The data come from the RNA Mapping Database (RMDB), library OK3TST. This 207-nucleotide RNA was probed chemically with DMS and 2A3. The reactions ran in a buffer of 150 mM KOAc, 10 mM MgCl2 and 150 mM bicine (pH 8.5), at 24 C. The 2A3 profile rests on 17,118 reads.
RNA sequence: GGGAACGACUCGAGUAGAGUCGAAAAGAUGGUACUUCUUGGAUAGGUUGUACGACAGUACAGAUGUAAUGUCAUUGACCUGUUCCCAGAUGGGAUGGUCGCGGUCAAUCUCAGCCAUGUGACUUCACCAGAUAUUCAAUUGACUUGAGCAGCAAGGCAUUUUGAAUGAGUUCGCUCAUUCAAAAUGAAAAGAAACAACAACAACAAC
Reactivity to DMS in 0.01 (KOAc 150mM, MgCl2 10mM, bicine 150mM(pH8.5), 24C), signal-to-noise 6, nucleotides 027 to 156: g010a120u000g020g010u010a080c040u000u000c030u000u000g020g000a090u000a030g010g020u000u000g010u010a040c030g000a020c020a040g010u010a100c010a250g020a190u020g010u000a030a030u000g010u000c010a110u000u000g000a020c010c010u010g010u000u000c000c010c030a130g010a120u000g010g010g000a110u000g010g030u000c030g030c060g000g020u000c020a050a070u000c050u010c040a110g020c020c030a100u010g020u000g020a070c030u000u000c050a130c040c030a100g010a120u000a080u010u000c080a060a130u000u000g010a060c050u000u000g000a080g010c050a100g010c040a040a090g010g020
Reactivity to 2A3 in 0.01 (KOAc 150mM, MgCl2 10mM, bicine 150mM(pH8.5), 24C), signal-to-noise 9, nucleotides 027 to 156: g070a030u090g020g070u090a080c080u040u040c010u020u030g010g000a020u030a040g020g030u040u030g090u150a050c080g020a000c010a010g040u050a020c040a060g250a210u280g110u070a080a030u030g010u020c020a060u020u140g000a010c000c000u020g070u060u060c000c000c010a010g040a060u110g010g020g030a030u090g020g020u040c030g000c040g040g010u060c040a090a110u040c060u030c080a020g010c020c010a090u150g030u040g040a020c000u060u030c060a060c080c000a010g030a060u100a100u060u170c130a120a120u060u090g050a060c000u020u040g030a030g080c020a010g040c020a070a030g080g000